This 207-nucleotide RNA was probed chemically with 2A3. The data come from the RNA Mapping Database (RMDB), library M2RFPK. For 2A3 the reverse transcriptase was SuperScript II with manganese.
RNA sequence: GGGAACGACUCGAGUAGAGUCGAAAAACGGUCAUAUGCGUAUGACCGAAUGAGCAUAACAGGGCCACCCCAAAGCGUUCACAUUGUGGCCCCUGUCAGAUUCUGGUAAAUCUGCGAGUUCUGCUAAAUUAGGUAACUCUCUUCGGAGAGUUACCAACCGAAUCAUCAAGUUCGCUUGAUGAUUCGGAAAAGAAACAACAACAACAAC
Reactivity to 2A3 in 0.01 (KOAc 150mM, MgCl2 10mM, bicine 150mM(pH8.5), 24C), signal-to-noise 2, nucleotides 027 to 156: a010c050g010g000u020c010a020u030a010u000g100c130g120u010a000u000g000a000c000c000g010a040a030u130g030a040g010c030a050u000a040a040c000a020g000g010g000c010c010a020c010c020c020c030a050a110a050g090c040g060u170u130c110a150c070a200u120u160g000u000g020g020c020c050c020c000u040g040u000c000a000g000a060u060u000c000u200g030g090u090a040a080a040u000c000u010g020c050g020a090g050u010u110c060u060g020c040u040a110a160a100u270u120a090g000g000u000a000a000c000u000c000u000c000u050u030c100g050g000a000g000a000g020u010u000a000c000c000a000a000

The RNA was probed in 150 mM KOAc, 10 mM MgCl2 and 150 mM bicine (pH 8.5) at 24 C.